[RMDB]
RNA sequence: GGGAACGACUCGAGUAGAGUCGAAAAGCGACCUCGCCGAUGGACCCCGCGUUGUACCUGGUGUGGGCGCAAGCUAACGCCGCCGCAGGCUAUCGGUACUCGGUCGAAGCGCAGCCGGGGUCGCAAGCGACGUGAAUAGUUUCGACUAUUCACGUCGAAAAGAAACAACAACAACAAC
Reactivity to DMS in 0.01 (KOAc 150mM, MgCl2 10mM, bicine 150mM(pH8.5), 24C), signal-to-noise 5, nucleotides 027 to 126: g010c020g000a030c000c030u000c060g010c020c000g020a050u010g010g010a160c130c030c020c090g010c070g010u020u010g030u010a090c180c120u010g030g030u010g020u000g000g010g010c010g020c290a060a110g020c040u010a150a040c040g000c010c000g010c090c020g020c040a080g010g010c020u010a020u010c020g000g010u000a090c120u000c040g020g010u000c050g010a070a060g010c120g020c120a130g010c060c010g010g000g000g010u000c000g020c020a080a060g010
Reactivity to 2A3 in 0.01 (KOAc 150mM, MgCl2 10mM, bicine 150mM(pH8.5), 24C), signal-to-noise 4, nucleotides 027 to 126: g000c010g000a010c000c010u010c030g030c010c000g070a080u050g040g090a300c020c010c030c040g030c020g040u090u180g140u110a160c050c070u090g000g000u060g010u030g130g040g000c010g010c050a070a000g010c010u050a060a000c010g010c020c010g020c000c010g020c030a020g030g000c020u040a030u050c030g020g010u040a070c040u040c070g000g020u050c060g050a170a030g120c080g010c110a010g040c020c000g000g000g000g000u000c000g000c010a020a020g100
Source: RMDB library OK2TRN, as collected in RNAgym. The record gives the reactivity of an RNA of 177 nucleotides to DMS and 2A3. The reactions ran in a buffer of 150 mM KOAc, 10 mM MgCl2 and 150 mM bicine (pH 8.5), at 24 C. 2A3 adducts were read by reverse transcription with SuperScript II with manganese. DMS adducts were read by reverse transcription with MarathonRT. For DMS, 4,927 sequencing reads were counted.